[RMDB]
RNA sequence: GGGAACGACUCGAGUAGAGUCGAAAACGCGCAGCCGAGGCAGAACAUCCGGCCAGCUUCCGCGGCUGGGUCGGCUUCUCAGUGCCCGUGGCCCACCGCAUCAUCGCAGGCUGCGACAUUCUGCUGAACGUAGUGUCGUUUUCGAACGACACUACGUAAAAGAAACAACAACAACAAC
Reactivity to DMS in 0.01 (KOAc 150mM, MgCl2 10mM, bicine 150mM(pH8.5), 24C), signal-to-noise 3, nucleotides 027 to 126: c110g010c060g020c030a100g010c070c030g000a180g010g020c010a030g000a040a030c080a240u000c030c020g000g010c030c000a060g030c000u000u010c250c150g030c010g010g010c240u000g010g000g020u000c030g010g010c060u010u000c090u010c180a100g010u010g040c030c020c270g020u020g020g010c010c000c020a050c040c040g020c010a050u010c160a070u000c140g010c040a060g010g010c010u000g000c100g000a030c050a180u020u000c010u010g010c020u010g010a120
Reactivity to 2A3 in 0.01 (KOAc 150mM, MgCl2 10mM, bicine 150mM(pH8.5), 24C), signal-to-noise 2, nucleotides 027 to 126: c050g000c020g020c040a020g040c010c020g060a130g000g000c010a000g000a030a030c000a030u040c010c010g000g010c010c000a010g000c000u190u120c090c110g020c000g000g000c100u060g010g010g010u040c040g000g060c020u130u050c090u010c080a130g070u080g070c040c010c030g140u210g030g050c010c000c000a010c010c020g010c000a050u080c030a040u080c020g000c020a000g000g000c010u020g000c010g010a000c020a020u020u010c010u000g010c020u050g060a070
Chemical mapping of a 177-nucleotide RNA with DMS and 2A3. The RNA was probed in 150 mM KOAc, 10 mM MgCl2 and 150 mM bicine (pH 8.5) at 24 C. The 2A3 profile rests on 3,148 reads. The DMS profile rests on 2,163 reads. The data come from the RNA Mapping Database (RMDB), library OK2TRN.